[RMDB]
RNA sequence: GGGAACGACUCGAGUAGAGUCGAAAAAUUUUCUAGCAUUUCGGCGUGUCGAACAGAUAAAUCACAUAUAAACAAUGUUUAACAAACACGCAUUAAUAUGCAUUAAAUAUAUAAACAUUUGUUUAUACCACGACUACCGAUUCGUCGGUAGUCGUGGAAAAGAAACAACAACAACAAC
Reactivity to 2A3 in 0.01 (KOAc 150mM, MgCl2 10mM, bicine 150mM(pH8.5), 24C), signal-to-noise 1, nucleotides 027 to 126: a000u060u080u110u000c110u100a000g130c000a130u080u050u000c110g000g000c000g020u000g010u020c020g060a000a060c000a040g300a080u140a140a080a050u300c130a140c060a210u030a000u000a000a000a060c000a030a000u000g000u000u000u000a160a110c180a010a050a000c050a050c180g000c000a000u000u110a080a250u050a000u110g000c000a000u000u220a110a060a000u280a000u030a000u000a030a060a040c000a020u000u000u230g000u000u000u000a000u000a000